RNA sequence: GGGAACGACUCGAGUAGAGUCGAAAAGAGUACACGCAGUAUACUGCCACUUGUGUGAGUAUACUUUUAGUACAAGCGAGUACACGCAGUAUACUGCCACUUGUGUAAAAUAACUUUUAGUACAAGCCCAGUCGCAAGUUUUCGAACUUGCGACUGGAAAAGAAACAACAACAACAAC
Reactivity to 2A3 in 0.01 (KOAc 150mM, MgCl2 10mM, bicine 150mM(pH8.5), 24C), signal-to-noise 1, nucleotides 027 to 126: g030a020g010u060a030c000a000c060g020c020a000g040u000a000u000a000c000u000g000c000c010a040c000u000u000g060u000g060u080g120a190g050u020a020u000a040c000u150u140u140u230a020g010u020a000c000a010a090g030c000g000a000g110u290a040c080a000c240g000c000a000g000u000a000u000a000c000u000g000c000c000a050c040u060u050g000u000g000u030a070a030a030a030u060a090a080c100u180u000u000u050a010g000u060a050c020a120a000g040c010
This 177-nucleotide RNA was probed chemically with 2A3. For 2A3, 684 sequencing reads were counted. The RNA was probed in 150 mM KOAc, 10 mM MgCl2 and 150 mM bicine (pH 8.5) at 24 C.